[RMDB]
RNA sequence: GGGAACGACUCGAGUAGAGUCGAAAAGGGUCAUACAAUCUGAAGGAGACCGUCAAUAUGAUCAAGGCCUUCAAGACUACCUCUUCGGAUCCGAAUAUCAACAAUAUGACCUUCCGGCAGGUAUGUGGCAGGAAACCAAGUUCGCUUGGUUUCCUGCAAAAGAAACAACAACAACAAC
Reactivity to 2A3 in 0.01 (KOAc 150mM, MgCl2 10mM, bicine 150mM(pH8.5), 24C), signal-to-noise 2, nucleotides 027 to 126: g000g090g000u000c000a000u030a160c040a090a130u000c080u110g030a010a020g060g040a000g010a020c010c000g010u000c000a200a270u250a180u270g090a000u110c120a130a010g030g050c060c000u040u000c090a040a000g060a030c070u070a000c000c080u000c000u000u000c000g000g040a040u070c070c090g070a100a020u110a110u210c030a040a040c000a000a040u070a020u060g010a000c000c000u020u000c010c000g060g000c040a010g040g040u130a110u250g020u050g140
Reactivity to DMS in 0.01 (KOAc 150mM, MgCl2 10mM, bicine 150mM(pH8.5), 24C), signal-to-noise 1, nucleotides 027 to 126: g000g010g000u000c000a000u000a050c060a010a060u000c050u000g000a050a000g000g000a130g000a130c100c290g000u060c030a070a100u000a030u000g000a030u000c030a040a080g060g000c030c000u000u060c050a190a000g000a160c000u080a100c130c000u000c000u000u020c000g010g000a010u030c060c060g050a100a000u030a010u020c290a110a070c300a020a030u000a000u000g000a180c150c080u000u000c000c000g000g090c300a020g000g000u000a000u000g050u000g000
Chemical mapping of a 177-nucleotide RNA with 2A3 and DMS. 2A3 adducts were read by reverse transcription with SuperScript II with manganese. For 2A3, 977 sequencing reads were counted. DMS adducts were read by reverse transcription with MarathonRT.